[RMDB]
RNA sequence: GGGAACGACUCGAGUAGAGUCGAAAACAGCCCACAGCAUCAAAGUGGGUGGAUACACACUGGCGCUUUGAUAAGCUGGCGUACACCAAUGACUUUGAAGCAUAUGACCAGUCACAGGAUGGAGCUACACUACUUUUAGGUUCGCCUAAAAGUAGUGAAAAGAAACAACAACAACAAC
Reactivity to 2A3 in 0.01 (KOAc 150mM, MgCl2 10mM, bicine 150mM(pH8.5), 24C), signal-to-noise 9, nucleotides 027 to 126: c020a030g070c010c020c010a030c010a020g040c010a040u040c020a030a020a020g010u020g010g070g000u030g020g020a090u280a140c160a010c010a010c080u070g250g000c070g000c030u130u060u060g060a070u100a110a040g000c010u010g020g000c020g040u050a030c030a010c000c010a060a160u110g040a040c030u060u070u120g060a060a010g010c030a050u070a130u270g070a080c030c020a020g020u030c020a020c020a080g030g040a030u030g020g030a030g010c010u060a030
Reactivity to DMS in 0.01 (KOAc 150mM, MgCl2 10mM, bicine 150mM(pH8.5), 24C), signal-to-noise 9, nucleotides 027 to 126: c140a220g010c010c000c010a180c080a050g030c040a090u000c050a020a030a030g030u000g010g010g030u000g000g000a130u010a100c220a100c050a030c020u000g010g000c040g010c050u000u010u000g000a050u010a060a110g010c020u000g000g000c070g010u000a120c060a040c030c020a090a110u010g000a050c030u000u000u000g010a060a050g010c050a130u010a100u000g010a070c090c030a050g000u000c030a060c120a080g000g010a090u010g000g010a130g000c060u000a150